[RMDB]
RNA sequence: GGGAACGACUCGAGUAGAGUCGAAAAGCUGGUGGCGACGUCAGGGGGCUAUGCGAAACGUACCGCGAUCGAGGAAUACCCGGUACAGGGCCGCGGCGGUAAAGGUGUGCUGACGGUCAUGUACGACCGUGCCCUUGACAUUCGUGUCAAGGGCACGAAAAGAAACAACAACAACAAC
Reactivity to DMS in 0.01 (KOAc 150mM, MgCl2 10mM, bicine 150mM(pH8.5), 24C), signal-to-noise 1, nucleotides 027 to 126: g000c070u040g000g000u000g010g020c030g000a110c020g040u030c060a140g000g020g020g000g020c090u000a090u040g010c000g000a020a060a130c060g040u020a080c040c040g000c070g030a070u000c020g010a070g020g020a060a060u000a220c020c020c010g010g040u020a010c070a170g000g010g010c060c010g000c050g020g000c010g000g000u020a030a130a070g000g000u060g000u020g000c010u000g000a080c000g000g020u010c000a080u000g000u060a000c000g030a100c120
Reactivity to 2A3 in 0.01 (KOAc 150mM, MgCl2 10mM, bicine 150mM(pH8.5), 24C), signal-to-noise 3, nucleotides 027 to 126: g050c040u060g010g090u070g060g010c020g000a070c010g060u120c090a120g000g000g000g000g000c060u090a050u160g010c010g100a090a090a000c050g000u040a040c000c000g010c010g100a090u070c020g010a020g010g090a080a100u110a120c020c020c000g060g000u080a010c080a070g020g000g000c000c000g010c000g020g020c010g000g000u100a130a090a080g240g000u120g090u110g080c000u000g020a120c020g010g000u000c010a020u090g030u040a000c020g010a020c020
Chemical mapping of a 177-nucleotide RNA with DMS and 2A3.
DMS adducts were read by reverse transcription with MarathonRT.
Reactivities are given for positions 27 through 126.
The DMS profile rests on 2,230 reads.